Description
An RNA of 177 nucleotides, treated with DMS and 2A3 and read out base by base.
RNA sequence: GGGAACGACUCGAGUAGAGUCGAAAACAACAAAACAAAACAUAGGGGAGUCAGGGUUCGGAUCUCCUACCUGAACCUAGGGUAACACUGACUGUGGAGGGGAAAAGAAAGAAAACAAAACAAAACAAAUGAGGGACGUAUUCGUACGUCCCUCAUUAAAAGAAACAACAACAACAAC
Reactivity to DMS in 0.01 (KOAc 150mM, MgCl2 10mM, bicine 150mM(pH8.5), 24C), signal-to-noise 1, nucleotides 027 to 126: c040a070a040c270a090a010a080a000c260a050a010a020a070c090a010u160a130g000g000g030g000a070g000u040c000a010g030g000g000u000u000c040g000g000a090u000c090u020c010c000u000a100c030c000u000g000a000a040c090c000u000a070g030g000g000u000a000a130c150a070c250u000g000a130c130u010g070u030g000g000a030g000g130g060g000a010a120a000a000g000a100a070a070g060a050a090a010a040c270a090a040a070a030c140a040a010a070a160c300a000
Reactivity to 2A3 in 0.01 (KOAc 150mM, MgCl2 10mM, bicine 150mM(pH8.5), 24C), signal-to-noise 1, nucleotides 027 to 126: c010a000a020c030a000a160a000a160c050a000a100a020a050c000a090u140a040g010g030g000g000a000g000u130c000a010g020g000g040u110u040c010g010g070a110u000c160u120c090c000u000a070c000c000u010g000a000a000c020c040u000a000g000g000g010u020a090a000c190a040c010u010g210a010c040u040g000u070g070g000a090g000g010g010g040a010a000a090a060g140a000a150a030g100a000a170a000a000c060a040a080a000a000c110a070a070a000a000c040a000
The RNA was probed in 150 mM KOAc, 10 mM MgCl2 and 150 mM bicine (pH 8.5) at 24 C.